[RMDB]
RNA sequence: GGGAACGACUCGAGUAGAGUCGAAAAGGCCUCGUUAACAAACCGCAAAAAAAUAGUCGCAAACGACGAAAACUACGCACUAGCAGCUUAAUACCCUGCUCAGAGCUCUCUCGCCCUAGCUUCCGCACGUAAGACGGGGAAUAACGAGAGAUCAAACCUUGUUUGAUGUGUUCGCACAUCAAACAAGAAAAGAAACAACAACAACAAC
Reactivity to 2A3 in 0.01 (KOAc 150mM, MgCl2 10mM, bicine 150mM(pH8.5), 24C), signal-to-noise 2, nucleotides 027 to 156: g080g000c010c010u050c060g120u120u060a100a040c010a060a050a080c060c110g000c060a040a050a000a000a000a000a060u080a020g050u060c040g050c130a050a130a090c090g060a010c010g060a060a040a030a000c120u230a030c030g000c010a010c050u030a000g020c000a000g000c000u060u010a090a000u040a140c000c000c000u000g000c000u000c070a030g030a030g020c030u000c000u020c000u000c000g000c000c020c020u020a100g030c000u060u020c110c080g060c070a110c120g050u140a000a000g070a060c010g010g020g000g020a000a040u110a090a000c000g000a000g000a000g000a010u060c040a010a000a030c020